[RMDB]
RNA sequence: GGGAACGACUCGAGUAGAGUCGAAAAGAUAUGGACCAUGACUCGCGAUAAGCUAUCAUGUCGGAAACGACAUAUAGCUUUUGACGCGAGGCAUGGUCCUAAGUCAAAACGGACGUUCGCGUCCGAAGCGUUGAAUAGGCUUCGGCCUAUUCAACGCAAAAGAAACAACAACAACAAC
Reactivity to DMS in 0.01 (KOAc 150mM, MgCl2 10mM, bicine 150mM(pH8.5), 24C), signal-to-noise 1, nucleotides 027 to 126: g000a150u000a300u000g010g000a010c000c000a060u010g000a060c000u000c000g020c000g060a180u000a050a020g060c050u020a020u000c250a000u000g010u020c010g000g010a080a080a300c010g020a000c000a000u000a000u020a000g060c010u000u000u020u010g010a260c190g000c010g000a020g000g010c000a010u000g000g010u000c000c000u000a000a040g020u000c020a070a180a210a080c000g000g000a050c000g020u020u000c230g000c000g020u030c000c000g020a040a090
This 177-nucleotide RNA was probed chemically with DMS. Values are in units of 0.01, from 0 to 300, in steps of 10. The RNA was probed in 150 mM KOAc, 10 mM MgCl2 and 150 mM bicine (pH 8.5) at 24 C.